Chemical mapping of a 207-nucleotide RNA with 2A3. For 2A3, 1,976 sequencing reads were counted. The reactions ran in a buffer of 150 mM KOAc, 10 mM MgCl2 and 150 mM bicine (pH 8.5), at 24 C.
[RMDB]
RNA sequence: GGGAACGACUCGAGUAGAGUCGAAAACCUUCAGUUCGUUCGCGAACUGAAGGAAAAAAGAUAUGGAUUCAGCAACAGCGUAGGGAUUCGGAAACGAAUCCUACGACAUGCUGGAUCCUAAGUCAAAAACGGAAAAGUGGUUCGCCACUUUUCCGAACGGCUUUAUAUUGUUCGCAAUAUAAAGCCGAAAAGAAACAACAACAACAAC
Reactivity to 2A3 in 0.01 (KOAc 150mM, MgCl2 10mM, bicine 150mM(pH8.5), 24C), signal-to-noise 2, nucleotides 027 to 156: c000c000u000u000c000a010g000u000u000c000g020u040u070c180g010c010g190a010a000c010u000g000a000a000g000g000a040a000a000a000a000a120g020a000u040a000u020g010g000a000u000u000c000a000g020c010a020a180c010a300g240c020g010u010a030g090g130g030a060u020u000c010g010g020a000a030a000c010g010a000a000u000c000c080u000a000c010g060a020c010a010u020g010c000u000g000g000a000u000c000c000u000a000a000g010u000c020a000a030a140a060a020c000g000g000a000a000a000a000g010u000g010g080u040u120c220g110c040c000a000c000u000u010u000u000c000c000g000a060a000